[RMDB]
RNA sequence: GGGAACGACUCGAGUAGAGUCGAAAAGGAACUCGGCAAAUCGUCCCCACAUAGCAGCUCCCAGGACCCCCUUCCAAAAUGAUCCGAGGGGGGUGGCUUAGAACGCAGGGAACCAGUGGAGCCAUGGGUGUAUGAUAUUCUUCGGAAUAUCAUACACAAAAGAAACAACAACAACAAC
Reactivity to 2A3 in 0.01 (KOAc 150mM, MgCl2 10mM, bicine 150mM(pH8.5), 24C), signal-to-noise 2, nucleotides 027 to 126: g050g000a050a000c000u000c030g060g020c060a050a020a070u030c000g000u010c010c010c050c010a020c010a030u160a000g080c070a010g010c040u010c020c010c000a030g010g060a110c000c000c000c010c000u010u020c020c000a100a070a030a120u200g050a050u060c070c000g000a010g020g000g000g000g000g000u000g000g010c020u000u030a040g040a140a020c050g010c020a040g000g070g170a000a030c040c000a080g040u150g200g020a000g000c000c020a040u090g130g080
Reactivity to DMS in 0.01 (KOAc 150mM, MgCl2 10mM, bicine 150mM(pH8.5), 24C), signal-to-noise 3, nucleotides 027 to 126: g010g010a090a110c020u000c000g000g010c060a070a110a110u010c010g010u000c010c000c010c020a160c140a100u000a100g020c090a130g000c030u010c000c010c040a250g000g010a150c000c000c010c000c010u010u000c010c060a030a050a110a090u030g000a060u010c190c120g010a050g010g000g020g010g020g030u000g010g030c020u010u000a080g010a080a120c220g000c020a060g020g000g000a070a080c030c020a040g010u000g040g000a050g030c010c050a050u000g000g010